[RMDB]
RNA sequence: GGGAACGACUCGAGUAGAGUCGAAAAGAGGCGAAAUAAUUCCCAUCUCCUUUGUACGGCCGGAGAUGGGUGUGGCCGUACUAAUAAGCCUCAUAGUGACGAGAGUCACGAAUUCUGGAUAGCCUGUGGUAGUCGGCUAUCCUGUGACUACCGUAGAGCUCGCAUUAUUAUUCGUAAUAAUGCGAGCAAAAGAAACAACAACAACAAC
Reactivity to 2A3 in 0.01 (KOAc 150mM, MgCl2 10mM, bicine 150mM(pH8.5), 24C), signal-to-noise 4, nucleotides 027 to 156: g000a000g000g010c010g030a110a010a030u180a020a070u140u040c010c010c020a050u050c060u080c020c020u030u040u080g030u020a020c010g000g020c020c030g080g060a130g040a090u200g050g020g010u070g030u040g010g000c010c010g000u010a000c000u000a010a080u020a060a010g010c000c010u000c020a070u120a070g180u200g080a010c020g030a030g000a010g190u000c000a000c000g010a050a060u200u090c090u090g000g010a000u000a000g010c010c020u080g030u060g120g140u090a050g100u140c020g000g000c000u000a000u010c000c000u010g000u010g000a010c000u030a140c010c020g000u030a050g010a010
Reactivity to DMS in 0.01 (KOAc 150mM, MgCl2 10mM, bicine 150mM(pH8.5), 24C), signal-to-noise 2, nucleotides 027 to 156: g000a020g010g020c000g020a110a090a100u000a080a170u000u000c000c000c000a160u000c060u010c030c010u000u000u000g020u010a040c050g020g030c040c040g000g000a150g030a090u010g000g020g020u000g010u000g020g010c050c020g030u020a110c050u000a070a130u000a090a210g030c030c050u000c030a150u000a120g010u000g000a060c020g000a230g010a220g020u010c000a020c020g000a090a190u010u010c170u000g000g000a080u000a050g010c010c010u000g040u000g010g000u000a110g050u000c230g000g010c040u000a010u010c010c000u000g020u000g010a070c030u000a060c010c010g000u000a110g010a190

Chemical mapping of a 207-nucleotide RNA with 2A3 and DMS. For 2A3, 2,257 sequencing reads were counted. The data come from the RNA Mapping Database (RMDB), library OK3TST. The DMS profile rests on 3,567 reads. The reactions ran in a buffer of 150 mM KOAc, 10 mM MgCl2 and 150 mM bicine (pH 8.5), at 24 C.